This 177-nucleotide RNA was probed chemically with 2A3 and DMS. Conditions: 150 mM KOAc, 10 mM MgCl2 and 150 mM bicine (pH 8.5), 24 C. 2A3 adducts were read by reverse transcription with SuperScript II with manganese. Source: RMDB library OK2TST, as collected in RNAgym.

[RMDB]
RNA sequence: GGGAACGACUCGAGUAGAGUCGAAAAACUGGCUAGGCCCUAGCGGGGUGGGGCCCGUGGCGUGCAGCGCCUACCUCACGCUAACCGCCAGGCUACUCGUCAACGUAGAGGCUCUCAAUAUGGCGGAGUGCACCAUUAUGUUCGCAUAAUGGUGCACAAAAGAAACAACAACAACAAC
Reactivity to 2A3 in 0.01 (KOAc 150mM, MgCl2 10mM, bicine 150mM(pH8.5), 24C), signal-to-noise 1, nucleotides 027 to 126: a000c020u010g040g060c040u060a030g070g000c050c000c000u020a050g010c050g010g020g000g020u070g000g000g000g000c010c020c020g120u080g030g010c020g010u040g000c080a090g040c020g040c040c000u030a060c010c000u000c000a020c000g000c000u030a160a070c010c040g000c010c010a010g020g100c030u080a090c020u010c030g100u080c060a140a190c050g020u090a060g000a030g140g000c010u000c000u010c030a070a070u130a110u110g070g000c000g000g040a070
Reactivity to DMS in 0.01 (KOAc 150mM, MgCl2 10mM, bicine 150mM(pH8.5), 24C), signal-to-noise 2, nucleotides 027 to 126: a100c090u000g010g000c060u000a080g000g030c080c010c020u000a080g000c050g020g000g000g010u000g030g010g000g010c090c060c130g020u000g000g030c020g010u000g020c200a090g020c050g000c040c020u020a070c120c010u000c040a060c050g010c030u010a100a160c100c080g010c000c000a020g000g000c020u000a050c040u000c060g010u010c080a080a050c070g000u000a100g000a200g020g000c030u000c050u000c110a100a110u000a060u010g000g020c060g000g000a180